[RMDB]
RNA sequence: GGGAACGACUCGAGUAGAGUCGAAAACGACCGCAGUUCGCUGCGGUCGAAAAGAACUGACUACGGUUCGCCUAGCCGGUGUCAGUUUAAGGGCGGAGAUUAAAACCCUGACGUUCGCGUCAGGGAAGCAUGUAUGAAUCUUCGGAUUCAUACAUGCAAAAGAAACAACAACAACAAC
Reactivity to DMS in 0.01 (KOAc 150mM, MgCl2 10mM, bicine 150mM(pH8.5), 24C), signal-to-noise 2, nucleotides 027 to 126: c030g000a000c010c000g020c010a010g040u000u020c250g030c000u000g060c020g000g020u000c000g000a000a050a120a200g000a020a000c020u000g000a010c010u010a300c000g000g000u000u000c070g020c100c040u010a090g010c000c000g020g000u010g000u010c000a010g010u010u000u000a030a110g010g000g000c100g000g000a070g000a170u000u000a040a110a140a110c000c000c000u000g000a020c000g010u010u030c260g000c010g000u000c000a010g020g000g010a000a030
Reactivity to 2A3 in 0.01 (KOAc 150mM, MgCl2 10mM, bicine 150mM(pH8.5), 24C), signal-to-noise 2, nucleotides 027 to 126: c000g010a000c000c010g050c030a020g010u050u080c140g070c100u020g020c020g020g010u000c000g000a000a020a000a030g040a000a000c010u010g020a010c010u080a040c040g030g060u040u060c040g090c050c040u090a030g040c000c010g000g000u030g020u010c000a010g000u010u040u020a060a040g010g040g060c090g060g040a150g020a100u110u280a040a080a100a170c010c000c000u000g010a010c020g030u050u050c280g020c000g110u020c000a010g000g000g000a000a000